[RMDB]
RNA sequence: GGGAACGACUCGAGUAGAGUCGAAAAAUUAAUCUCAUUUUUGGAUCUCGUGGCAAGGCCUCUGUGCUUGCGCAUGCCUUGCCACACAGUGUCAUUGGGCUUACACUACCCCCAAUUGACGCGACCCGAUUUCAAGUAUCUUCGGAUACUUGAAAUCAAAAGAAACAACAACAACAAC
Reactivity to 2A3 in 0.01 (KOAc 150mM, MgCl2 10mM, bicine 150mM(pH8.5), 24C), signal-to-noise 2, nucleotides 027 to 126: a000u080u070a030a060u040c030u020c070a100u060u120u060u120u160g120g030a070u060c090u030c200g000u000g000g000c000a000a000g000g000c000c010u000c010u020g000u000g040c040u110u090g040c020g000c010a010u170g000c000c000u000u000g000c000c000a010c000a000c000a000g010u010g000u000c000a000u000u000g000g000g010c020u080u100a090c140a050c140u140a100c020c010c000c000c030a000a000u060u060g000a000c000g000c000g010a030c000c040c030
Reactivity to DMS in 0.01 (KOAc 150mM, MgCl2 10mM, bicine 150mM(pH8.5), 24C), signal-to-noise 2, nucleotides 027 to 126: a080u010u000a120a090u000c020u020c040a220u000u000u000u000u000g010g000a040u000c130u000c140g010u010g010g010c010a000a010g000g010c000c000u010c010u000g000u000g020c030u010u000g030c020g010c010a000u010g000c000c000u000u010g000c000c010a000c030a000c120a060g060u000g010u000c010a010u000u000g000g000g010c110u000u010a110c240a110c240u010a090c180c290c000c010c010a000a020u000u020g030a000c020g030c040g010a090c080c040c080